[RMDB]
Conditions: 150 mM KOAc, 10 mM MgCl2 and 150 mM bicine (pH 8.5), 24 C. Structure probing data (DMS and 2A3) for a 207-nucleotide construct. For 2A3, 3,034 sequencing reads were counted. The data come from the RNA Mapping Database (RMDB), library OK3TST. 2A3 is a SHAPE reagent: it acylates the 2'-hydroxyl of flexible nucleotides of all four kinds.

RNA sequence: GGGAACGACUCGAGUAGAGUCGAAAAAGUCCAUAUGCCCAUCUUUGCUGCGCCGGAUGGAUGUUUAUACCCGCUAUGGAUGCCUAUUACUGAAAUGUAAUAGAUGCCUAAUACUCUCUCUCAGGGAGAGAGUUUAGAUGCCUCCAAAGGCGAUGCUGACUCAGUAAAUGUUCGCAUUUACUGAGUCAAAAGAAACAACAACAACAAC
Reactivity to DMS in 0.01 (KOAc 150mM, MgCl2 10mM, bicine 150mM(pH8.5), 24C), signal-to-noise 2, nucleotides 027 to 156: a110g000u000c010c020a080u000a080u010g020c020c010c010a150u010c020u000u010u010g000c010u010g010c020g040c030c000g010g010a090u000g020g010a060u040g010u000u000u000a150u000a170c030c000c010g020c160u000a210u000g000g010a050u000g010c040c010u000a030u000u000a010c020u000g000a180a090a110u000g040u000a010a020u000a000g010a120u010g020c090c000u000a050a060u000a080c000u000c000u000c000u000c010u000c040a300g030g050g000a010g020a010g020a010g030u000u000u010a020g010a130u000g020c030c040u000c030c040a070a120a120g020g000c000g020a070u000g020c030u010
Reactivity to 2A3 in 0.01 (KOAc 150mM, MgCl2 10mM, bicine 150mM(pH8.5), 24C), signal-to-noise 4, nucleotides 027 to 156: a000g040u000c010c010a010u030a030u160g020c030c010c020a040u020c020u020u090u170g020c040u050g070c010g000c010c020g030g000a020u050g020g000a030u060g070u030u170u030a120u070a090c030c040c030g030c060u040a020u060g010g000a010u010g020c000c000u010a010u020u000a000c010u040g100a090a120a130u150g010u000a000a010u000a010g050a060u090g010c000c000u040a050a020u140a140c000u010c000u000c000u010c010u040c190a160g010g300g010a000g000a000g000a000g000u000u000u000a010g000a010u110g020c000c020u050c010c000a070a080a060g020g000c010g010a020u090g030c000u010